[RMDB]
RNA sequence: GGGAACGACUCGAGUAGAGUCGAAAAUGGGCUACCAGUAAGCGAAAAAUGAUACAGGACGAAAAAAACAUAAUUCGAGAUUUUUCAGGAUGGAUUUUUUUAGGUAUCUAUCAAAACUAUACUGAUGCAACGUAGAGCACGUUCGCGUGCUCUACAAUCAUAAACUGUCCUUCGGGACAGUUUAUGAAAAAGAAACAACAACAACAAC
Reactivity to 2A3 in 0.01 (KOAc 150mM, MgCl2 10mM, bicine 150mM(pH8.5), 24C), signal-to-noise 2, nucleotides 027 to 156: u050g020g000g000c020u030a040c000c050a020g040u040a020a010g010c010g080a060a020a070a040a030u070g010a040u070a050c050a010g040g160a030c080g040a020a000a050a010a010a030a030c040a080u170a100a090u060u040c010g030a010g020a130u030u160u060u140u210c040a020g000g020a020u030g000g060a050u040u050u030u000u000u000u130a030g020g010u040a020u000c040u030a040u050c030a000a010a040a050c010u060a040u040a180c010u020g000a020u020g000c030a020a040c070g010u000a010g000a000g000c000a010c000g020u040u030c100g030c000g070u000g000c000u000c000u000a010c000a000a000
Reactivity to DMS in 0.01 (KOAc 150mM, MgCl2 10mM, bicine 150mM(pH8.5), 24C), signal-to-noise 1, nucleotides 027 to 156: u000g080g000g010c000u000a110c070c030a120g040u000a060a070g000c020g010a040a150a040a140a140u020g000a090u000a050c020a100g000g020a150c090g020a010a000a010a010a020a070a080c010a160u020a130a110u010u020c000g030a150g010a270u000u000u000u000u020c000a080g030g000a030u000g000g020a000u000u000u000u000u000u000u000a090g020g000u000a050u000c050u000a090u000c090a030a050a040a030c020u010a130u000a020c000u030g010a020u000g000c060a070a110c090g000u000a000g020a020g040c010a000c000g030u000u000c270g010c040g040u000g020c000u040c000u000a000c010a020a050